[RMDB]
This 177-nucleotide RNA was probed chemically with 2A3 and DMS. The RNA was probed in 150 mM KOAc, 10 mM MgCl2 and 150 mM bicine (pH 8.5) at 24 C. It was measured as part of the RMDB library OK1LIB. The DMS profile rests on 4,359 reads.
RNA sequence: GGGAACGACUCGAGUAGAGUCGAAAAGAGGAAAUAGUGUCUAGGAGCGCGCGGAGUAAACAUAUAUGGUUCAUAUAUAACCGUAGGCACGUAAAGAAAGCGUGUAAGGCAGAGAGAACUGCCAGAACGUCCUACUAAUCUUCGGAUUAGUAGGACGAAAAGAAACAACAACAACAAC
Reactivity to 2A3 in 0.01 (KOAc 150mM, MgCl2 10mM, bicine 150mM(pH8.5), 24C), signal-to-noise 5, nucleotides 027 to 126: g140a030g050g090a060a100a000u110a080g040u030g000u010c020u020a030g100g070a050g050c010g020c000g000c000g010g020a030g060u160a050a120a010c080a030u070a000u010a020u040g230g100u170u150c050a000u040a010u020a000u010a090a030c010c010g020u030a020g000g050c000a010c020g010u060a030a040a010g130a030a070a020g000c030g000u030g020u130a090a180g000g010c030a000g010a000g000a010g010a060a040c000u000g000c000c000a000g010a040a010
Reactivity to DMS in 0.01 (KOAc 150mM, MgCl2 10mM, bicine 150mM(pH8.5), 24C), signal-to-noise 3, nucleotides 027 to 126: g020a110g010g000a050a050a060u020a060g000u020g000u000c030u010a100g000g020a090g000c070g000c000g070c010g020g000a160g000u010a020a050a070c220a070u000a000u000a000u010g000g020u060u020c100a070u000a040u010a010u010a020a080c030c000g020u000a010g000g000c000a030c020g010u000a060a010a070g010a050a130a080g000c000g020u030g020u030a060a080g000g020c010a010g010a080g010a140g000a040a050c000u000g000c000c010a150g010a090a140